[RMDB]
RNA sequence: GGGAACGACUCGAGUAGAGUCGAAAAGGGGCAGGUGGUCCUGCCUGCUCUAUACUUAGACCAGUGGAGCCAGUCUGGGCUCUUGUCCUCCAGCUGUGUCAUCAGAGAAUAUUUUUGGGAUUGGCAGACUUCCAAAACAGUUCGCUGUUUUGGAAGUAAAAGAAACAACAACAACAAC
Reactivity to 2A3 in 0.01 (KOAc 150mM, MgCl2 10mM, bicine 150mM(pH8.5), 24C), signal-to-noise 2, nucleotides 027 to 126: g000g000g000g000c000a000g000g000u060g030g210u070c000c010u010g000c000c000u000g020c010u020c000u000a120u030a080c070u070u120a030g060a060c000c000a030g030u060g040g050a020g000c020c000a040g070u000c090u120g040g110g000c020u030c000u070u120g020u000c010c010u000c000c040a040g030c040u060g040u080g000u120c020a100u070c030a040g030a000g130a260a070u170a120u140u150u070u090u120g080g010g000a030u010u030g050g000c000a020g040
Reactivity to DMS in 0.01 (KOAc 150mM, MgCl2 10mM, bicine 150mM(pH8.5), 24C), signal-to-noise 3, nucleotides 027 to 126: g020g000g000g000c010a000g010g010u000g020g010u010c110c040u010g000c010c000u000g010c010u010c010u010a090u000a090c130u010u000a120g030a110c030c060a040g020u000g010g010a060g000c040c020a120g000u010c090u000g010g000g000c020u020c050u000u010g010u010c020c000u010c020c030a080g020c050u010g020u010g010u000c010a070u000c090a100g000a140g000a090a060u020a090u000u010u010u010u010g000g010g000a070u010u000g010g010c080a130g020
About this RNA: Chemical mapping of a 177-nucleotide RNA with 2A3 and DMS. DMS adducts were read by reverse transcription with MarathonRT. The DMS profile rests on 3,088 reads. The RNA was probed in 150 mM KOAc, 10 mM MgCl2 and 150 mM bicine (pH 8.5) at 24 C.